[RMDB]
About this RNA:
An RNA of 177 nucleotides, treated with 2A3 and DMS and read out base by base. Values cover nucleotides 27 to 126. 2A3 adducts were read by reverse transcription with SuperScript II with manganese. The reactions ran in a buffer of 150 mM KOAc, 10 mM MgCl2 and 150 mM bicine (pH 8.5), at 24 C.
RNA sequence: GGGAACGACUCGAGUAGAGUCGAAAACCCGAAGCUGCGCGCUCGGUCGAAGAGGACGACCUUCCCCGAUAGAGACGGUACCGUUCAUCGGUCAAGGGUAUACGGUAGCUGCGCUCCCCUGCUAGAAUCCGGCAUUAAUAUUCGUAUUAAUGCCGGAAAAAGAAACAACAACAACAAC
Reactivity to 2A3 in 0.01 (KOAc 150mM, MgCl2 10mM, bicine 150mM(pH8.5), 24C), signal-to-noise 4, nucleotides 027 to 126: c010c000c000g010a020a000g030c070u050g010c030g010c010g000c010u040c050g000g050u040c010g040a100a030g050a090g110g020a040c020g040a030c010c020u070u060c020c000c000c010g020a060u050a100g070a020g010a020c030g010g100u100a100c060c020g010u040u090c040a020u080c050g020g050u030c060a040a050g070g020g020u070a040u010a060c090g010g080u090a030g030c020u040g000c030g000c010u020c000c000c000c000u020g000c030u050a050g070a050a050
Reactivity to DMS in 0.01 (KOAc 150mM, MgCl2 10mM, bicine 150mM(pH8.5), 24C), signal-to-noise 3, nucleotides 027 to 126: c010c000c010g010a080a070g040c060u020g010c020g010c070g010c020u000c040g030g000u010c050g000a070a060g000a200g020g000a130c080g000a080c050c010u010u010c020c010c000c010g020a090u020a090g000a110g010a030c060g000g000u010a030c020c020g030u000u020c110a030u010c020g020g010u020c100a080a100g000g000g000u000a090u010a050c050g010g000u010a010g010c040u010g000c090g010c020u000c010c010c020c020u000g000c060u010a100g010a170a110